Structure probing data (DMS and 2A3) for a 177-nucleotide construct.

RNA sequence: GGGAACGACUCGAGUAGAGUCGAAAAUUUUUCUUCUGGAAAGGCAGCUUAGGAUAAUUAUUUCAGCUUUAUUGAGGGCAGAUUAGUUGAAGUCUGGGCGCUGCGUUUCAAUACGCGUUGUACAUGGCUCAUAUGACUUAUUCGUAAGUCAUAUGAGAAAAGAAACAACAACAACAAC
Reactivity to DMS in 0.01 (KOAc 150mM, MgCl2 10mM, bicine 150mM(pH8.5), 24C), signal-to-noise 7, nucleotides 027 to 126: u000u010u000u000u010c020u000u010c110u010g010g010a050a060a060g000g010c030a040g010c050u010u010a150g010g000a050u000a060a060u000u020a060u020u010u000c030a060g010c040u000u000u010a110u020u010g010a100g000g010g010c030a080g010a040u010u010a040g020u000u000g000a060a090g010u000c020u000g010g010g010c170g010c060u000g010c010g010u000u010u010c140a080a090u010a060c100g020c100g000u010u000g010u000a060c160a090u010g010g010
Reactivity to 2A3 in 0.01 (KOAc 150mM, MgCl2 10mM, bicine 150mM(pH8.5), 24C), signal-to-noise 8, nucleotides 027 to 126: u090u080u020u020u010c020u100u010c030u070g080g030a050a030a020g080g010c010a010g000c030u080u080a050g050g020a060u070a140a070u240u120a110u070u070u030c020a020g000c000u100u140u050a110u080u160g100a130g020g040g000c030a020g030a100u030u070a020g030u010u020g050a080a010g030u000c020u020g030g030g030c050g000c040u030g000c010g050u000u000u050c040a050a040u150a050c050g020c030g030u010u010g030u010a060c030a120u070g100g000

Source: RMDB libraries RFM100 and RFMREP, as collected in RNAgym. The reactions ran in a buffer of 150 mM KOAc, 10 mM MgCl2 and 150 mM bicine (pH 8.5), at 24 C. DMS adducts were read by reverse transcription with MarathonRT.